Structure probing data (DMS and 2A3) for a 177-nucleotide construct. 2A3 adducts were read by reverse transcription with SuperScript II with manganese. It was measured as part of the RMDB library TTRDEL. For DMS, 1,403 sequencing reads were counted.
[RMDB]
RNA sequence: GGGAACGACUCGAGUAGAGUCGAAAAGAUAUGGAGAAACCUCGAUAAGGAUGUGUCGGAAACGACACCAUCCUUUUGACGAGGUUCUCCUAAGUCAAAGUGCUCCUUGGUUCGCCAAGGAGCACAAUCAUUUCGAAUCGUUCGCGAUUCGAAAUGAAAAAGAAACAACAACAACAAC
Reactivity to DMS in 0.01 (KOAc 150mM, MgCl2 10mM, bicine 150mM(pH8.5), 24C), signal-to-noise 2, nucleotides 027 to 126: g000a060u000a300u000g000g000a010g010a070a020a020c000c010u000c000g020a220u000a020a010g020g000a030u000g000u010g030u000c000g000g030a040a040a190c000g000a000c000a010c300c280a010u000c000c000u000u000u010u000g020a180c060g010a000g000g000u000u000c000u000c000c000u000a000a070g000u010c030a060a080a150g000u000g010c000u000c000c000u000u000g000g010u000u000c300g020c000c010a000a040g000g000a000g010c000a000c010a010a070
Reactivity to 2A3 in 0.01 (KOAc 150mM, MgCl2 10mM, bicine 150mM(pH8.5), 24C), signal-to-noise 1, nucleotides 027 to 126: g030a060u070a050u120g030g000a000g030a050a270a160c010c000u000c030g080a170u090a300a070g000g000a000u000g000u010g000u000c000g020g060a050a070a030c020g020a000c000a010c040c010a020u040c020c070u020u010u010u090g030a020c030g020a000g000g060u000u000c000u020c000c010u000a040a010g000u010c020a160a000a060g030u000g020c010u030c000c000u000u020g070g050u090u020c300g130c130c000a020a000g000g040a010g000c000a000c000a000a040